[RMDB]
RNA sequence: GGGAACGACUCGAGUAGAGUCGAAAAGAUAUGGAGUAAUGGAGGCCCUAUAGGCGUUGAAAUCGGAAACGAUGGAGCCUCAUAGGGUGAAGUUACUCCUAAGUCAAAACUGGAGUUCGCUCCAGAAGUUACACAUUUACUUCGGUAAAUGUGUAACAAAAGAAACAACAACAACAAC
Reactivity to DMS in 0.01 (KOAc 150mM, MgCl2 10mM, bicine 150mM(pH8.5), 24C), signal-to-noise 4, nucleotides 027 to 126: g010a040u000a300u000g020g010a030g010u000a000a000u000g010g000a300g010g000c000c000c000u000a010u000a040g000g020c000g030u010u000g000a070a120a040u000c010g010g000a140a070a090c020g010a020u000g020g000a170g010c000c000u000c270a010u000a010g000g020g030u000g000a160a170g000u000u000a010c000u000c000c000u000a010a080g010u000c020a060a070a120a130c000u000g000g000a000g000u000u010c290g000c000u000c000c000a030g000a060a070
Reactivity to 2A3 in 0.01 (KOAc 150mM, MgCl2 10mM, bicine 150mM(pH8.5), 24C), signal-to-noise 3, nucleotides 027 to 126: g010a000u070a050u150g010g000a000g010u010a000a030u020g030g030a020g300g130c000c010c000u000a000u000a000g020g000c050g150u260u060g050a020a020a010u000c010g000g030a090a040a050c000g000a000u010g010g040a010g000c010c000u010c050a000u010a010g000g020g010u040g000a000a000g000u000u010a000c000u000c000c000u000a020a010g020u000c010a010a020a140a170c010u000g000g000a010g010u070u080c180g150c150u000c000c000a010g000a030a000
Chemical mapping of a 177-nucleotide RNA with DMS and 2A3. For DMS, 3,187 sequencing reads were counted. For 2A3 the reverse transcriptase was SuperScript II with manganese. It was measured as part of the RMDB library TTRDEL.